The data come from the RNA Mapping Database (RMDB), library OK1LIB. An RNA of 177 nucleotides, treated with DMS and 2A3 and read out base by base. For DMS, 4,223 sequencing reads were counted.
RNA sequence: GGGAACGACUCGAGUAGAGUCGAAAACUAUUUAUAGACAGAACAGUGGAAAACGUAUAUCGCUAUAAACCUUAUACCCCGAAUCUUCCAGUCGUACAAUUCCACAUAGGCGAGGCAUAAGCGAAAGCCGGAGUAUCAUAUUCGUAUGAUACUCCGGAAAAGAAACAACAACAACAAC
Reactivity to DMS in 0.01 (KOAc 150mM, MgCl2 10mM, bicine 150mM(pH8.5), 24C), signal-to-noise 3, nucleotides 027 to 126: c030u020a080u050u030u030a080u020a060g020a080c140a140g000a060a060c100a070g010u000g020g000a060a070a110a110c110g000u010a050u000a060u000c020g000c100u000a030u010a030a080a090c030c010u010u000a080u000a130c000c030c020c070g000a070a060u010c030u010u000c020c040a050g010u010c030g000u000a030c160a060a100u020u000c020c010a020c040a080u010a090g010g000c040g000a030g020g010c050a020u000a020a090g010c040g020a100a020a150g000
Reactivity to 2A3 in 0.01 (KOAc 150mM, MgCl2 10mM, bicine 150mM(pH8.5), 24C), signal-to-noise 5, nucleotides 027 to 126: c010u010a050u040u150u030a200u060a040g090a030c090a050g090a120a030c030a050g040u090g080g060a060a070a020a010c010g010u030a050u010a020u120c010g000c030u020a010u100a130a070a050c000c000u070u070a060u070a090c020c000c000c030g070a040a070u030c030u080u000c020c000a030g020u040c000g000u050a050c040a040a070u080u030c020c000a020c010a100u070a040g020g000c010g010a010g020g000c020a040u040a160a050g030c030g050a080a030a000g000